The record gives the reactivity of an RNA of 207 nucleotides to 2A3.
The RNA was probed in 150 mM KOAc, 10 mM MgCl2 and 150 mM bicine (pH 8.5) at 24 C.
RNA sequence: GGGAACGACUCGAGUAGAGUCGAAAACAUAGGGUUUCACAAUGUGCGCCAUUAACAUUGUUUAUGCAAGCACGUUUCGCAAUGUACGGCGCAGAAACAUUGCCAACACAAAUACGCUUCACGAUGUAAAACAUCGGUGCGUUCGCGCACCGAUGAAGCAGUAUGAAGCGUUCGCGCUUCAUACUGCAAAAGAAACAACAACAACAAC
Reactivity to 2A3 in 0.01 (KOAc 150mM, MgCl2 10mM, bicine 150mM(pH8.5), 24C), signal-to-noise 2, nucleotides 027 to 156: c010a010u180a160g040g000g060u030u170u020c110a030c050a070a120u090g050u020g020c000g000c000c020a090u140u260a080a000c000a000u030u000g010u040u190u140a160u190g050c060a020a120g130c070a020c180g020u080u110u120c040g010c000a010a000u000g020u030a030c130g000g000c000g010c000a000g000a020a050a000c010a020u000u050g060c110c030a110a010c040a030c000a060a180a020u170a110c060g050c050u110u130c070a050c110g050a040u110g030u200a040a040a050a000c000a000u020c000g000g000u000g000c000g000u040u080c190g000c010g000c000a000c000c000g030a020u000g000a020a010